[RMDB]
RNA sequence: GGGAACGACUCGAGUAGAGUCGAAAAGCUGCCUCUGACGUCCUUCUCCCCCGGAAACGGGGCCGAAGGGUGGUAAAGCGUGUCGCCUGGCGCUGGCACGGGUAUGCGUGGCGGUCGACCCUGGCCGACCUAGGGCCACGUUCGCGUGGCCCUAGGUAAAAGAAACAACAACAACAAC
Reactivity to DMS in 0.01 (KOAc 150mM, MgCl2 10mM, bicine 150mM(pH8.5), 24C), signal-to-noise 2, nucleotides 027 to 126: g000c060u010g040c010c010u000c060u000g000a080c040g010u000c000c000u000u000c010u010c300c000c000c000c000g000g000a080a070a190c010g010g010g000g050c060c050g000a020a020g020g010g000u000g030g020u000a050a070a140g000c020g000u010g010u020c020g000c010c000u000g000g000c100g020c050u010g000g010c020a020c040g020g000g010u010a070u000g020c060g020u000g000g000c040g010g010u110c040g010a130c060c030c000u000g010g030c030c020g010
Reactivity to 2A3 in 0.01 (KOAc 150mM, MgCl2 10mM, bicine 150mM(pH8.5), 24C), signal-to-noise 1, nucleotides 027 to 126: g000c010u000g030c000c000u080c080u090g100a000c000g030u020c000c030u010u020c030u040c030c000c000c010c010g000g000a020a010a020c000g000g010g030g010c000c000g000a000a010g020g010g050u010g060g000u130a090a060a000g080c020g000u020g020u020c030g000c040c000u080g170g000c080g010c060u140g050g000c000a030c030g040g000g050u170a050u240g070c080g030u000g030g020c020g010g000u150c080g010a110c000c010c010u030g070g000c000c020g020
Chemical mapping of a 177-nucleotide RNA with DMS and 2A3.
For 2A3, 1,287 sequencing reads were counted.
Conditions: 150 mM KOAc, 10 mM MgCl2 and 150 mM bicine (pH 8.5), 24 C.